[RMDB]
RNA sequence: GGGAACGACUCGAGUAGAGUCGAAAACUCCACGCGGAUUGGUGCAGCACCCUGCAUGCGCCGGUGCGGGCCAACCUUCCCCCCGCUCAUUGCCUCUUCCAAAAGGGUGUGGCCUAACGAGCUGGGGGCGUAUUUAAUCAGGCUAGCGCGGCGGGCCGUCCCUAGUAACUUUCGAGUUACUAGGGACAAAAGAAACAACAACAACAAC
Reactivity to 2A3 in 0.01 (KOAc 150mM, MgCl2 10mM, bicine 150mM(pH8.5), 24C), signal-to-noise 2, nucleotides 027 to 156: c000u030c000c030a050c030g090c090g030g110a200u040u120g040g000u100g080c000a000g020c010a070c010c050c010u150g040c080a090u210g000c010g020c060c020g030g010u060g020c040g000g000g000c000c000a020a020c040c110u090u200c010c000c000c000c000c010g000c000u000c000a000u000u050g000c000c010u010c030u230u050c020c020a110a200a150a140g100g020g000u070g010u000g000g020c000c000u040a050a010c080g000a010g010c030u060g000g000g000g000g000c000g030u010a110u030u230u090a160a100u190c050a020g000g060c010u010a040g060c040g000c010g050g090c060g060g060g010c040c020